Chemical mapping of a 177-nucleotide RNA with 2A3 and DMS.
[RMDB]
RNA sequence: GGGAACGACUCGAGUAGAGUCGAAAACGGACGUAACGUCAGCCGUGGCAUCGUGCUGCUCGACCAUGCUGAACGCGAUGGUCUGGACGGAUUUAUCACCAUCACCGGUGGCAAACUGAUGACCUAACCGGUAUUACGUGUUCGCACGUAAUACCGGAAAAGAAACAACAACAACAAC
Reactivity to 2A3 in 0.01 (KOAc 150mM, MgCl2 10mM, bicine 150mM(pH8.5), 24C), signal-to-noise 2, nucleotides 027 to 126: c020g060g080a000c030g040u140a300a010c010g020u070c060a020g000c060c040g050u040g000g000c020a050u010c040g030u080g090c060u060g010c020u040c050g050a010c020c010a020u030g000c010u100g060a120a020c030g010c060g060a050u030g000g000u040c020u080g010g040a040c070g000g000a000u000u100u000a100u060c010a030c050c020a020u090c020a030c100c110g040g010u010g020g030c010a060a000a000c030u090g030a060u070g080a120c000c020u030a090a050
Reactivity to DMS in 0.01 (KOAc 150mM, MgCl2 10mM, bicine 150mM(pH8.5), 24C), signal-to-noise 2, nucleotides 027 to 126: c080g020g010a020c050g000u010a080a050c030g000u000c000a050g020c040c110g030u000g020g000c080a070u010c070g000u030g010c120u000g000c060u020c060g000a030c040c000a010u000g020c030u020g000a070a210c100g020c030g010a060u000g010g000u000c040u000g030g000a180c050g030g020a170u020u000u000a060u000c020a000c030c000a050u010c300a140c270c090g000g030u000g000g010c090a020a030a070c040u000g010a100u000g000a110c030c020u000a070a110